The record gives the reactivity of an RNA of 207 nucleotides to 2A3 and DMS. The RNA was probed in 150 mM KOAc, 10 mM MgCl2 and 150 mM bicine (pH 8.5) at 24 C. The data come from the RNA Mapping Database (RMDB), library RNAMAK.
RNA sequence: GGGAACGACUCGAGUAGAGUCGAAAACGGUCGUUCGCGACCGAUGGCUCCUAAGUCUGGAUGAGGGAAUUGACAUGAUGAUCAUCGGAAACGAUGAAUAUCAACAGCAAUUCCUCCCCACCAUCCAGAUAUGGAAGGGUUAACCGUUCGCGGUUAAUUAAGGUGGACAAUUCGUUGUCCACCUUAAAAAAGAAACAACAACAACAAC
Reactivity to 2A3 in 0.01 (KOAc 150mM, MgCl2 10mM, bicine 150mM(pH8.5), 24C), signal-to-noise 1, nucleotides 027 to 156: c020g000g000u020c010g030u110u150c260g010c020g110a010c000c000g000a020u020g120g040c080u030c020c000u080a220a020g030u000c000u000g000g000a000u000g030a010g000g000g000a010a020u000u030g070a090c180a220u040g010a010u020g030a030u030c000a000u000c000g050g020a070a070a040c010g010a000u000g000a030a020u110a010u070c010a010a110c020a040g010c000a000a000u010u000c000c020u020c020c010c000c000a020c000c000a000u000c000c000a000g000a010u010a030u030g030g050a040a100g070g010g030u060u050a020a020c000c010g000u060u040c300g000c030g100g030u030u040a030a020
Reactivity to DMS in 0.01 (KOAc 150mM, MgCl2 10mM, bicine 150mM(pH8.5), 24C), signal-to-noise 3, nucleotides 027 to 156: c030g030g010u000c000g010u010u000c160g040c010g000a040c020c000g000a020u000g030g000c010u010c010c000u000a130a300g040u000c000u020g010g010a070u000g010a300g010g000g010a020a030u000u010g010a120c070a300u010g010a040u010g010a130u010c000a010u000c000g020g010a150a090a250c010g020a030u000g010a050a100u000a040u000c010a010a060c050a230g030c010a010a030u000u000c010c010u000c170c090c060c040a300c170c010a020u000c010c000a010g000a030u000a120u000g010g010a110a160g010g000g000u010u000a010a020c010c010g010u000u000c150g010c030g000g010u010u000a020a040